[RMDB]
RNA sequence: GGGAACGACUCGAGUAGAGUCGAAAAGUAGUGGAGCGUACGGAAGUGGAAACACUUCAAGAAAAUCCACUACAACGUGCGCAGUAUUGGAGUGUUUGAGGGAGAACCUCAAGCACUCCAGUACAAAGAUCAGUGAUCGUUUCGACGAUCACUGAUCAAAAGAAACAACAACAACAAC
Reactivity to 2A3 in 0.01 (KOAc 150mM, MgCl2 10mM, bicine 150mM(pH8.5), 24C), signal-to-noise 3, nucleotides 027 to 126: g010u030a010g000u000g010g010a040g080c100g010u020a010c030g010g000a030a000g000u000g000g050a000a050a000c010a000c010u020u000c020a020a000g030a000a070a000a010u000c000c000a000c000u010a010c000a010a020c050g110u230g020c140g000c080a020g000u000a000u000u010g010g000a000g000u000g000u010u010u010g000a010g020g050g040a150g070a180a250c000c000u000c000a000a000g000c010a000c000u020c000c000a010g000u000a000c020a000a020a000
Reactivity to DMS in 0.01 (KOAc 150mM, MgCl2 10mM, bicine 150mM(pH8.5), 24C), signal-to-noise 2, nucleotides 027 to 126: g000u000a030g020u010g030g000a040g000c220g020u010a260c300g000g020a000a030g040u000g020g000a170a210a260c010a030c000u000u000c010a000a000g000a010a190a200a060u000c000c000a040c010u000a000c040a140a090c140g000u020g060c030g050c170a190g000u000a000u000u000g000g020a000g000u000g020u000u000u000g000a020g000g000g000a250g090a080a190c000c010u000c000a000a000g000c000a000c000u000c000c000a020g040u000a000c000a040a060a120